[RMDB]
RNA sequence: GGGAACGACUCGAGUAGAGUCGAAAAUAUGGGCAGUUCGCUGCCCAUACGAGCGGAGUCCGGCACUAUGAGCCCGCAGCGUUGGUGCGUAGCCGCCGUGCAGAGACCAAGCCUUCGGGCUUGGUAAGACUAUAAACGUUUUCGAACGUUUAUAGUCAAAAGAAACAACAACAACAAC
Reactivity to 2A3 in 0.01 (KOAc 150mM, MgCl2 10mM, bicine 150mM(pH8.5), 24C), signal-to-noise 4, nucleotides 027 to 126: u130a000u020g000g010g000c010a000g010u040u080c150g060c110u000g000c010c000c000a000u000a000c000g010a030g030c030g020g040a040g070u030c050c000g050g000c020a000c030u080a060u150g080a050g030c030c030c070g070c110a040g020c060g090u110u180g010g010u050g000c030g020u030a020g020c030c020g000c000c010g030u070g010c050a040g060a010g030a170c000c000a000a000g010c000c000u030u050c210g100g010g000c000u010u000g000g000u000a010a010
Reactivity to DMS in 0.01 (KOAc 150mM, MgCl2 10mM, bicine 150mM(pH8.5), 24C), signal-to-noise 8, nucleotides 027 to 126: u000a010u000g010g000g020c000a010g010u000u020c240g020c010u000g010c000c000c000a000u000a000c060g010a120g010c030g010g000a140g000u000c060c030g000g010c020a060c030u000a040u010g000a170g010c010c030c100g030c120a110g000c060g010u000u000g010g010u000g010c030g010u000a160g010c030c020g010c020c040g020u000g010c160a120g000a160g010a040c000c000a000a010g000c000c000u000u010c190g020g010g010c000u000u000g000g010u000a010a050

Source: RMDB library M2PK50, as collected in RNAgym. Chemical mapping of a 177-nucleotide RNA with 2A3 and DMS. 2A3 adducts were read by reverse transcription with SuperScript II with manganese.